[RMDB]
RNA sequence: GGGAACGACUCGAGUAGAGUCGAAAAGCAAGUCGCAUCGCAAAACCGCGGCAAGUGGAGUUAGCGAGAGGAGGCUGGGUUUUGGCUUCCUUAAGGAAUCGGUCACCGAGAAGGUGUGGUCGUUACCUAGACAGUUUUCUGUUCGCAGAAAACUGAAGCGGCUUUCAAUAUUCGUAUUGAAAGCCGCAAAAGAAACAACAACAACAAC
Reactivity to 2A3 in 0.01 (KOAc 150mM, MgCl2 10mM, bicine 150mM(pH8.5), 24C), signal-to-noise 1, nucleotides 027 to 156: g040c030a090a000g110u050c010g020c050a040u020c000g000c020a000a000a100a140c000c010g020c020g120g040c220a200a050g010u040g010g070a120g010u090u110a030g020c020g020a040g000a060g050g030a000g040g000c020u070g090g160g000u150u070u100u090g000g000c000u000u010c000c000u010u030a010a030g010g010a050a010u060c010g020g000u050c020a000c000c020g070a030g080a290a000g120g020u160g000u030g050g020u000c020g010u000u010a120c000c020u040a010g010a050c020a000g000u060u010u000u000c010u000g040u030u090c220g000c050a000g000a000a000a000a000c000u010g040a030a000